[RMDB]
RNA sequence: GGGAACGACUCGAGUAGAGUCGAAAAGCCUGUCAUCCACUCACCUCGUCUUCCCGACCCUGCAGCCCACGUCCCUACUGGGGUAGGGGUGGCAGGAGGUGGGAAGGAGAUUGCUCGCCAGGCACCAUCAGUAAUCGCAUUUCGAUGCGAUUACUGAAAAAGAAACAACAACAACAAC
Reactivity to DMS in 0.01 (KOAc 150mM, MgCl2 10mM, bicine 150mM(pH8.5), 24C), signal-to-noise 3, nucleotides 027 to 126: g000c010c010u000g010u010c030a070u000c080c070a120c160u000c120a110c120c030u000c030g000u010c010u000u000c010c010c010g010a250c110c010c000u040g000c030a210g020c010c010c010a070c050g000u000c010c010c010u000a120c260u020g020g010g000g010u010a260g010g020g000g050u000g010g000c030a010g000g010a010g010g010u010g000g010g000a020a020g000g010a010g000a080u010u000g020c050u000c050g000c070c010a060g000g010c030a160c060c040a140
Reactivity to 2A3 in 0.01 (KOAc 150mM, MgCl2 10mM, bicine 150mM(pH8.5), 24C), signal-to-noise 2, nucleotides 027 to 126: g010c000c000u000g030u010c020a090u040c010c030a040c050u060c010a050c020c010u040c040g180u040c090u020u010c000c000c010g020a040c020c000c000u000g000c010a010g000c000c000c020a150c090g050u090c000c000c010u220a300c180u230g020g000g020g020u010a070g000g000g000g070u010g040g000c010a010g020g030a020g030g030u130g020g010g010a010a020g030g000a020g000a020u040u130g030c040u050c090g040c030c000a010g000g000c010a000c000c010a060
Structure probing data (DMS and 2A3) for a 177-nucleotide construct. 2A3 adducts were read by reverse transcription with SuperScript II with manganese. Conditions: 150 mM KOAc, 10 mM MgCl2 and 150 mM bicine (pH 8.5), 24 C. DMS adducts were read by reverse transcription with MarathonRT.